An RNA of 155 nucleotides, treated with DMS and 2A3 and read out base by base. It was measured as part of the RMDB library P90LIB. Values cover nucleotides 27 to 135.
[RMDB]
RNA sequence: GGGAACGACUCGAGUAGAGUCGAAAAUAGCGAUUCUAAAAGAAGAAGAGGUUCUCGAGGAUUGCUAAGCAAAGAUGGGCUAGAACCUGUCAACUAAAAUGCUAAUCUUUAUAUACAUGGUGCUUUCGAGCAUCAAAAAGAAACAACAACAACAAC
Reactivity to DMS in 0.01 (KOAc 150mM, MgCl2 10mM, bicine 150mM(pH8.5), 24C), signal-to-noise 9, nucleotides 027 to 135: u010a040g010c010g010a020u010u010c010u000a050a080a110a060g000a080a070g010a100a100g010a100g010g010u010u000c000u000c040g000a090g000g000a000u000u000g000c010u000a030a060g010c050a030a050a070g000a010u000g000g000g010c020u020a100g020a070a120c010c010u000g000u010c050a080a080c110u030a030a050a080a120u010g000c020u010a000a060u000c020u000u000u010a060u020a080u020a090c190a090u010g010g020u000g000c010u000u000u040c130g000a000g010c010a000u000c000a000a040
Reactivity to 2A3 in 0.01 (KOAc 150mM, MgCl2 10mM, bicine 150mM(pH8.5), 24C), signal-to-noise 9, nucleotides 027 to 135: u200a040g080c010g010a010u030u010c020u070a050a070a020a030g150a090a000g050a060a010g030a020g040g040u010u000c000u000c010g020a020g000g000a000u000u000g000c010u020a020a010g010c020a040a020a010g010a010u030g000g020g010c050u150a060g040a090a070c010c000u010g030u030c010a020a030c020u110a030a020a020a040u080g000c010u030a010a010u010c010u010u120u010a120u020a010u000a050c080a060u050g000g000u010g000c000u030u030u050c090g050a010g000c000a000u020c030a020a060